[RMDB]
RNA sequence: GGGAACGACUCGAGUAGAGUCGAAAAUCGGAGUUCGCUCCGAAAAAAAGGUCCAACCUCACAUGUCCUGUGAGGCUGAAGGAAGGCUGUGUGAGGUUAGACCUAUCAAAAGAGGUGUUCGCACCUCGGAUAAAGCUAAGUUCGCUUAGCUUUAUCCAAAAGAAACAACAACAACAAC
Reactivity to 2A3 in 0.01 (KOAc 150mM, MgCl2 10mM, bicine 150mM(pH8.5), 24C), signal-to-noise 6, nucleotides 027 to 126: u020c000g000g010a010g020u090u070c110g090c060u010c010c010g010a020a000a000a000a000a000a000g000g000u010c010c000a000a000c000c000u000c000a010c010a020u030g020u040c000c010u080g050u100g150a100g070g070c010u050g030a040a020g080g040a040a020g020g000c020u020g000u000g000u000g020a010g000g000u000u000a000g000a000c000c000u010a090u090c090a050a100a040a040g010a000g000g010u010g010u040u060c110g030c080a000c000c000u000c010
Reactivity to DMS in 0.01 (KOAc 150mM, MgCl2 10mM, bicine 150mM(pH8.5), 24C), signal-to-noise 5, nucleotides 027 to 126: u000c000g010g000a020g020u000u010c230g030c010u000c000c000g010a010a000a040a130a070a110a010g000g000u000c000c020a020a000c000c010u000c000a000c000a020u000g010u000c020c010u000g010u010g020a130g020g010c050u000g000a080a090g010g000a250a030g000g000c010u010g010u000g000u010g000a010g000g000u000u000a020g000a030c000c000u000a010u010c130a080a050a100a140g000a020g000g020u010g000u010u010c200g020c030a030c010c000u000c010

This 177-nucleotide RNA was probed chemically with 2A3 and DMS. The RNA was probed in 150 mM KOAc, 10 mM MgCl2 and 150 mM bicine (pH 8.5) at 24 C. For DMS the reverse transcriptase was MarathonRT. 2A3 adducts were read by reverse transcription with SuperScript II with manganese. DMS (dimethyl sulfate) methylates the pairing face of unpaired adenines and cytosines. Reactivities are given for positions 27 through 126.